Annotation:
The record gives the reactivity of an RNA of 177 nucleotides to 2A3 and DMS. The DMS profile rests on 2,461 reads. Source: RMDB library TTRDES, as collected in RNAgym. Values are in units of 0.01, from 0 to 300, in steps of 10.
RNA sequence: GGGAACGACUCGAGUAGAGUCGAAAAGAUAUGGAUCUGGCCAGACAUGCAAACCUGUCGGAAACGACAGGCUUGCAACAGCUGGCCCAGAUCCUAAGUCAAAUCCCGCAGGUUCGCCUGCGGGAAACAAAGUUAUACGCUUCGGCGUAUAACUUUGAAAAGAAACAACAACAACAAC
Reactivity to 2A3 in 0.01 (KOAc 150mM, MgCl2 10mM, bicine 150mM(pH8.5), 24C), signal-to-noise 1, nucleotides 027 to 126: g000a010u010a000u120g010g000a000u010c010u030g030g000c010c000a010g050a070c090a180u300g000c030a000a000a030c010c000u000g020u000c010g000g000a040a030a020c000g000a020c000a010g000g000c010u000u010g000c000a020a050c050a100g050c010u010g010g000c020c040c000a000g000a000u000c000c000u010a020a000g000u010c020a000a030a270u040c010c010c010g000c000a000g130g020u140u300c300g090c140c000u000g030c000g000g000g040a000a000a000
Reactivity to DMS in 0.01 (KOAc 150mM, MgCl2 10mM, bicine 150mM(pH8.5), 24C), signal-to-noise 2, nucleotides 027 to 126: g010a020u000a170u010g000g000a030u000c010u010g000g000c000c000a000g030a020c110a150u020g000c020a000a000a010c000c000u010g050u010c010g010g000a040a030a090c000g020a020c020a000g010g010c010u010u000g010c020a030a040c210a160g000c010u000g000g020c170c050c080a010g000a020u000c000c000u010a000a080g000u010c010a120a170a120u000c000c000c000g030c010a010g000g010u000u030c300g030c000c000u010g000c010g000g020g000a010a010a070